[RMDB]
RNA sequence: GGGAACGACUCGAGUAGAGUCGAAAACUAAUCACAUACUUUAUAUCAGUCAGUGUCCUGGCAGGAAACAGAUGGCAUACUCAAAUGUAAUUGAAUUGAGUUUAAUAAAGGGGCUGUUGACAGCAGACCACUUUUAAUGGUUCGCCAUUAAAAGUGGAAAAGAAACAACAACAACAAC
Reactivity to DMS in 0.01 (KOAc 150mM, MgCl2 10mM, bicine 150mM(pH8.5), 24C), signal-to-noise 3, nucleotides 027 to 126: c040u000a080a080u010c100a100c100a070u010a080c070u000u000u000a070u010a100u030c050a080g010u000c040a080g000u000g010u000c050c030u000g020g000c070a080g010g010a040a070a060c070a030g000a080u010g020g010c040a070u010a030c040u010c030a020a050a050u010g000u010a090a100u010u000g010a090a100u000u000g000a050g010u000u010u000a080a060u010a060a090a090g000g000g000g010c030u010g010u000u000g020a070c100a070g020c080a080g020a180
Reactivity to 2A3 in 0.01 (KOAc 150mM, MgCl2 10mM, bicine 150mM(pH8.5), 24C), signal-to-noise 4, nucleotides 027 to 126: c020u070a040a110u180c050a020c040a170u270a100c050u180u200u130a140u050a060u190c020a020g070u010c000a010g010u010g040u100c010c030u020g050g010c020a030g030g100a070a070a040c010a040g060a060u090g050g000c010a010u010a050c010u010c010a090a040a040u120g040u170a120a130u150u130g100a030a050u030u040g010a030g010u010u050u110a160a130u130a040a090a000g000g020g030g000c010u030g040u080u030g030a040c000a030g020c000a010g060a090

The record gives the reactivity of an RNA of 177 nucleotides to DMS and 2A3. It was measured as part of the RMDB library OK2TRN. 2A3 adducts were read by reverse transcription with SuperScript II with manganese.